Source information
Source: RMDB library OK2TST, as collected in RNAgym. An RNA of 177 nucleotides, treated with DMS and 2A3 and read out base by base. The 2A3 profile rests on 1,267 reads. DMS adducts were read by reverse transcription with MarathonRT. The DMS profile rests on 811 reads.
RNA sequence: GGGAACGACUCGAGUAGAGUCGAAAAGGCAAGCAUGUCGCGCAUCACACCGAUGAGGCCUUCGCGGGAUGCUACAGCCGCCAUUCGCUCGGUAUCCUCGCGCGCCAGCGCGAAAAACAGCGCGUCCGCCCGCUAAAUAGUUCGCUAUUUAGCGGGCAAAAGAAACAACAACAACAAC
Reactivity to DMS in 0.01 (KOAc 150mM, MgCl2 10mM, bicine 150mM(pH8.5), 24C), signal-to-noise 1, nucleotides 027 to 126: g040g020c010a200a060g010c020a030u020g020u010c020g020c010g000c160a050u000c080a090c300a150c090c030g010a070u020g000a300g020g000c050c080u010u010c030g010c040g010g000g000a020u010g000c020u000a080c200a100g010c010c020g000c030c030a040u010u020c060g050c030u030c120g010g000u000a080u000c110c030u000c070g060c010g010c200g060c140c110a190g000c080g000c000g020a000a040a030a140a090c070a050g030c030g000c090g000u000c090c070
Reactivity to 2A3 in 0.01 (KOAc 150mM, MgCl2 10mM, bicine 150mM(pH8.5), 24C), signal-to-noise 1, nucleotides 027 to 126: g000g000c040a000a000g070c000a010u160g080u300c000g010c000g010c090a030u030c000a020c020a030c050c030g030a080u130g030a010g030g090c030c020u040u070c010g000c020g000g010g040a010u010g030c000u070a070c070a040g000c000c000g020c030c000a060u090u050c020g030c010u020c030g030g010u090a090u050c030c010u000c070g000c020g000c040g070c100c030a120g010c050g020c080g130a030a000a000a000a000c010a010g040c020g030c000g000u010c020c100